[RMDB]
RNA sequence: GGGAACGACUCGAGUAGAGUCGAAAAUCUGGAUCCAGAUCAUAUACAAAUUUUUGAUGAGCUCUGCGGUGUUUGUGGGACUGUUUUCUACAAUUGUUCAACUUAUUGUUGGAAUAUUAUCAAUUAAACGGAUUAUAGUGUUCGCACUAUAAUCCGUAAAAGAAACAACAACAACAAC
Reactivity to DMS in 0.01 (KOAc 150mM, MgCl2 10mM, bicine 150mM(pH8.5), 24C), signal-to-noise 1, nucleotides 027 to 126: u010c050u000g010g010a060u000c070c040a060g010a050u000c050a080u000a070u030a210c140a090a050a180u000u010u040u000u000g020a100u000g020a110g000c010u010c020u000g020c050g040g030u000g000u000u000u000g030u000g000g000g010a100c110u010g000u000u010u010u000c030u000a070c180a050a040u000u000g030u000u000c010a010a020c030u010u000a080u000u000g050u020u000g030g010a010a090u010a070u000u000a130u000c060a050a110u000u000a040a120